[RMDB]
RNA sequence: GGGAACGACUCGAGUAGAGUCGAAAAUGGAGGUAUAGUCUGGGGGAUGGCUAUGAGGAGUUAAACCAAGACAGGGACCACAGUUGCGAUGAGGAUGGUCACAUGGGUAUCCCUCAUGUUAGCUGGUAUUUCUAAGCAAUUUUCUUUAGGCUAUGUAAAAUUACCUAGCAUUCGUGCUAGGUAAUUUAAAAGAAACAACAACAACAAC
Reactivity to DMS in 0.01 (KOAc 150mM, MgCl2 10mM, bicine 150mM(pH8.5), 24C), signal-to-noise 2, nucleotides 027 to 156: u000g040g010a060g000g010u000a040u000a080g010u000c040u010g010g000g010g010g050a080u000g010g010c040u000a060u000g010a060g010g010a080g000u000u010a060a050a140c100c120a050a090g010a130c050a090g030g030g000a050c040c010a050c070a080g040u010u000g010c080g010a080u000g020a060g030g010a080u000g000g000u000c040a050c050a080u000g010g010g000u000a130u000c060c030c040u000c070a040u020g000u010u000a100g030c010u010g030g000u000a070u000u000u000c010u020a060a210g030c070a040a090u020u000u000u000c030u000u010u000a100g020g000c030u010a050u010g010u000a060
Reactivity to 2A3 in 0.01 (KOAc 150mM, MgCl2 10mM, bicine 150mM(pH8.5), 24C), signal-to-noise 2, nucleotides 027 to 156: u070g010g000a030g000g010u080a010u040a080g040u020c030u020g050g010g000g000g010a020u040g010g010c030u060a070u130g020a050g040g030a030g000u080u130a110a070a040c020c070a040a010g070a060c100a070g000g070g010a020c020c000a030c020a080g050u160u090g020c020g020a080u030g020a050g090g010a060u010g010g030u020c010a020c010a040u020g010g020g000u040a040u060c010c010c000u030c000a000u030g000u040u070a020g000c030u030g000g000u020a110u050u070u010c010u050a040a020g030c020a010a070u040u010u060u020c020u060u090u040a070g000g000c000u000a010u140g050u150a050
This 207-nucleotide RNA was probed chemically with DMS and 2A3. Values cover nucleotides 27 to 156.